[RMDB]
RNA sequence: GGGAACGACUCGAGUAGAGUCGAAAAUUACACUCCGGACACAGUUCUUCGAGCUUUUCCAAAGUUAAAUUCGGUUUAUUUUGGCUAAACUCGUUGUAUUUACAGUUGGGAAAGUUACUGCACCCAAGUUCCCUUCAAUAUUCGUAUUGAAGGGAACAAAAGAAACAACAACAACAAC
Reactivity to 2A3 in 0.01 (KOAc 150mM, MgCl2 10mM, bicine 150mM(pH8.5), 24C), signal-to-noise 3, nucleotides 027 to 126: u070u030a040c030a030c020u010c020c000g080g000a010c040a000c010a090g050u080u040c000u040u040c020g020a020g050c060u040u030u020u000c000c000a030a010a020g020u040u060a030a030a050u070u080c120g080g010u030u050u000a020u010u110u060u060g060g000c050u040a020a010a010c030u030c020g080u070u050g060u030a080u020u120u060a030c010a050g050u030u050g040g020g010a000a090a030g030u060u040a040c040u050g040c030a100c010c010c000a010a040
Reactivity to DMS in 0.01 (KOAc 150mM, MgCl2 10mM, bicine 150mM(pH8.5), 24C), signal-to-noise 4, nucleotides 027 to 126: u010u000a120c100a100c120u010c020c050g010g010a080c090a090c130a090g010u000u000c040u000u000c030g000a060g010c030u000u000u010u000c000c000a000a050a060g000u010u000a010a030a050u000u000c130g020g010u010u000u000a030u010u010u000u000g010g010c190u000a010a040a020c010u010c060g010u010u010g020u010a040u010u000u000a050c090a100g020u000u000g010g010g000a020a080a090g010u000u010a040c110u000g010c150a130c020c020c020a070a150